[RMDB]
RNA sequence: GGGAACGACUCGAGUAGAGUCGAAAACUGAGAGGGACUAAUGUUGUGCAAGUCAAGCCUUAUGAUUCUAAGCCUGCUCUCUCAGAAGAACUUGCUAUAAGUUGGAAUAUAUGUUCUGCAGGCUGAGCACACUGGGAUGAUUCGUCAUCCCAGUGUGAAAAGAAACAACAACAACAAC
Reactivity to DMS in 0.01 (KOAc 150mM, MgCl2 10mM, bicine 150mM(pH8.5), 24C), signal-to-noise 4, nucleotides 027 to 126: c010u000g010a030g000a030g020g010g010a100c090u010a090a060u000g020u000u000g050u010g010c050a060a040g000u010c040a110a110g010c070c060u010u000a130u010g000a140u000u000c040u000a110a050g010c010c000u000g000c000u010c020u000c000u010c040a030g000a300a110g000a060a030c020u000u000g010c120u000a110u010a040a070g010u000u000g010g000a100a080u000a110u010a070u010g010u000u020c010u000g000c020a010g000g010c010u000g000a060g020
Reactivity to 2A3 in 0.01 (KOAc 150mM, MgCl2 10mM, bicine 150mM(pH8.5), 24C), signal-to-noise 2, nucleotides 027 to 126: c010u010g050a000g010a010g000g060g000a010c040u120a180a140u160g060u230u100g000u110g000c030a030a060g010u030c060a100a060g000c000c000u210u180a160u250g170a060u090u040c020u130a000a030g030c030c000u010g000c000u040c000u010c000u000c020a010g030a030a020g020a020a010c010u020u090g010c060u170a060u060a300a070g070u060u030g040g060a010a000u060a010u030a020u230g030u030u000c020u010g010c000a020g080g000c040u050g000a050g010
An RNA of 177 nucleotides, treated with DMS and 2A3 and read out base by base. High 2A3 reactivity points to a flexible backbone, as in loops and unpaired stretches. 2A3 adducts were read by reverse transcription with SuperScript II with manganese. For DMS the reverse transcriptase was MarathonRT. Source: RMDB library OK2TRN, as collected in RNAgym.